[RMDB]
RNA sequence: GGGAACGACUCGAGUAGAGUCGAAAACUACAACUUCGGUUGUAGAUUUUAGGGGUCGUUGCUCACGAGGGACAUGCUCUGAAGCCUCCACGGAGCAACAGCCUCCCCACCGUGAGUAACGACGGAGGCACCCACCGCAUGUGGUUUCGACCACAAAUAAGCUAGGCUUAUUCGUAAGCCUAGCUUAAAAAGAAACAACAACAACAAC
Reactivity to 2A3 in 0.01 (KOAc 150mM, MgCl2 10mM, bicine 150mM(pH8.5), 24C), signal-to-noise 3, nucleotides 027 to 156: c000u000a000c000a020a000c000u040u040c190g140g010u000u020g040u010a020g030a100u040u030u020u100a210g080g030g000g020u010c000g000u000u000g010c000u020c020a010c050g040a300g000g000g010a040c030a060u030g000c000u010c020u020g040a070a000g020c000c000u000c000c000a000c010g010g000a000g010c000a040a080c010a020g040c030c070u050c000c030c020c050a260c200c010g000u010g010a020g000u020a000a000c000g000a000c010g020g000a000g000g000c010a020c000c010c000a010c010c080g150c120a140u160g000u000g040g060u030u120u230c210g100a010c000c000a000c030a070a040a030
Reactivity to DMS in 0.01 (KOAc 150mM, MgCl2 10mM, bicine 150mM(pH8.5), 24C), signal-to-noise 2, nucleotides 027 to 156: c010u010a010c000a000a020c020u000u020c300g010g000u010u000g000u000a000g010a060u000u000u000u000a110g000g000g190g010u000c000g050u000u000g050c000u020c010a020c020g070a130g050g020g040a120c090a300u000g000c020u000c040u010g010a140a150g010c020c010u000c000c020a300c080g020g010a040g000c030a060a060c080a180g000c090c030u000c020c000c050c210a100c200c000g010u000g000a240g020u020a090a100c010g000a040c060g000g000a020g020g130c000a130c060c020c050a180c040c100g000c020a300u000g050u000g010g020u000u000u010c070g000a130c010c030a060c090a070a100a230
Annotation
This 207-nucleotide RNA was probed chemically with 2A3 and DMS. Conditions: 150 mM KOAc, 10 mM MgCl2 and 150 mM bicine (pH 8.5), 24 C. For DMS, 1,811 sequencing reads were counted. Source: RMDB library RNAMAK, as collected in RNAgym.